[RMDB]
RNA sequence: GGGAACGACUCGAGUAGAGUCGAAAACGGGGUGGUAGAGUUUGACAGGCAAGCAUGUGCGUGCAGAGGCGAGUAGUGCUUGCCUGUCUAACUCGCUAGUCUCGGCCGCGGGGGGCCCGGGCUACCCCCUCCGGACGGUAUUCGUACCGUCCGGAGGAAAAGAAACAACAACAACAAC
Reactivity to DMS in 0.01 (KOAc 150mM, MgCl2 10mM, bicine 150mM(pH8.5), 24C), signal-to-noise 1, nucleotides 027 to 126: c150g040g000g000g020u000g000g000u000a060g000a000g030u000u020u000g000a000c000a010g000g020c010a000a010g000c000a000u000g030u030g030c000g060u010g000c050a200g020a250g020g000c010g000a080g000u000a250g000u000g010c000u000u010g000c030c020u000g020u000c000u000a000a000c000u000c000g010c080u060a030g030u000c000u000c300g000g030c010c060g000c050g000g010g000g010g000g050c120c040c080g000g020g010c070u010a110c030c010c000
Reactivity to 2A3 in 0.01 (KOAc 150mM, MgCl2 10mM, bicine 150mM(pH8.5), 24C), signal-to-noise 3, nucleotides 027 to 126: c030g010g000g000g040u060g020g030u090a270g030a000g010u000u000u000g010a010c000a000g000g010c000a000a000g000c000a000u090g100u210g190c040g080u190g040c090a080g100a050g280g220c000g000a040g040u080a020g010u080g000c010u010u000g000c000c000u000g000u010c000u000a000a000c000u010c000g000c000u010a010g010u000c010u000c000g030g000c020c010g170c070g040g020g010g000g070g050c030c040c000g000g000g000c010u030a040c000c000c000
The data come from the RNA Mapping Database (RMDB), library OK1LIB. Chemical mapping of a 177-nucleotide RNA with DMS and 2A3. 2A3 is a SHAPE reagent: it acylates the 2'-hydroxyl of flexible nucleotides of all four kinds. Values cover nucleotides 27 to 126. For DMS, 2,507 sequencing reads were counted.